Structure probing data (DMS and 2A3) for a 207-nucleotide construct.
[RMDB]
RNA sequence: GGGAACGACUCGAGUAGAGUCGAAAAGAGCGAUUAGACAAAGGGGUAGAGCUACAUAUUAGAUAGCUGUAUAAUCGUUCAAGUUACAUCAAAACAUCUUCAAUAUUUAUUACUUACUUUCCCUUCUGCCAGAGUACGGUAUUCGUACCGUACUCAACUAGUAAGGAUCUUUCGAGAUCCUUACUAGAAAAGAAACAACAACAACAAC
Reactivity to DMS in 0.01 (KOAc 150mM, MgCl2 10mM, bicine 150mM(pH8.5), 24C), signal-to-noise 2, nucleotides 027 to 156: g000a060g020c030g010a030u000u000a020g000a080c030a050a060a080g000g020g020g020u000a060g020a030g030c020u010a050c060a110u000a140u000u010a150g010a250u000a040g010c020u000g030u000a060u000a030a040u000c050g030u000u000c070a080a090g020u000u000a070c070a100u000c070a020a060a060a070c060a070u000c030u000u000c040a060a100u000a100u000u000u000a070u020u000a100c060u010u000a060c040u000u000u000c010c010c000u000u000c030u000g010c040c060a150g020a030g020u000a010c000g000g040u000a040u000u000c300g010u000a030c000c010g010u000a000c000u000c000a010a090
Reactivity to 2A3 in 0.01 (KOAc 150mM, MgCl2 10mM, bicine 150mM(pH8.5), 24C), signal-to-noise 9, nucleotides 027 to 156: g000a000g000c010g000a000u020u030a030g060a110c080a050a170a080g020g010g030g030u070a050g020a000g050c000u020a010c010a050u270a180u200u150a090g180a290u010a010g020c010u010g020u050a030u010a010a000u010c000g000u000u000c010a000a020g020u040u110a070c050a080u130c070a060a150a060a060c030a080u060c070u300u120c090a120a100u080a200u200u210u110a140u100u130a070c030u070u030a020c010u020u040u020c000c000c000u030u060c040u060g050c050c050a050g000a000g000u000a000c000g000g000u000a010u000u070c170g030u000a010c000c000g000u000a000c000u000c000a000a000
Values cover nucleotides 27 to 156. For 2A3, 7,237 sequencing reads were counted.